Description
The data come from the RNA Mapping Database (RMDB), library RNAMAK. The record gives the reactivity of an RNA of 207 nucleotides to 2A3. For 2A3 the reverse transcriptase was SuperScript II with manganese. The 2A3 profile rests on 885 reads.
RNA sequence: GGGAACGACUCGAGUAGAGUCGAAAAUCCGCGAUUCGUCGCGGAAAAAAGGGGUCCCACGAAGAACUGGAGUACGGAAGGCUGAAGCCUCCACGGCCUCCCGUACGUUGAAAGGGAGUGGGACGGAGGCACCCAAAAACCGAGCUUCGGCUCGGAACAGGCGUAAGUGAUUCGUCACUUACGCCUGAAAAGAAACAACAACAACAAC
Reactivity to 2A3 in 0.01 (KOAc 150mM, MgCl2 10mM, bicine 150mM(pH8.5), 24C), signal-to-noise 1, nucleotides 027 to 156: u000c000c000g000c000g000a010u050u100c240g020u010c030g060c080g050g160a090a000a000a000a000a140g180g000g040g000u020c030c040c020a030c040g040a060a150g150a150a020c020u030g010g040a080g000u000a000c000g000g000a010a000g020g000c010u020g000a080a000g030c000c000u000c010c010a050c020g000g020c000c010u020c010c030c010g000u020a000c000g000u020u020g050a060a010a020g010g020g030a130g030u020g020g000g000a000c000g000g000a000g000g020c000a000c000c000c000a080a050a010a000a070c000c000g000a000g000c010u090u160c240g080g000c000u000c000g000g000a000a010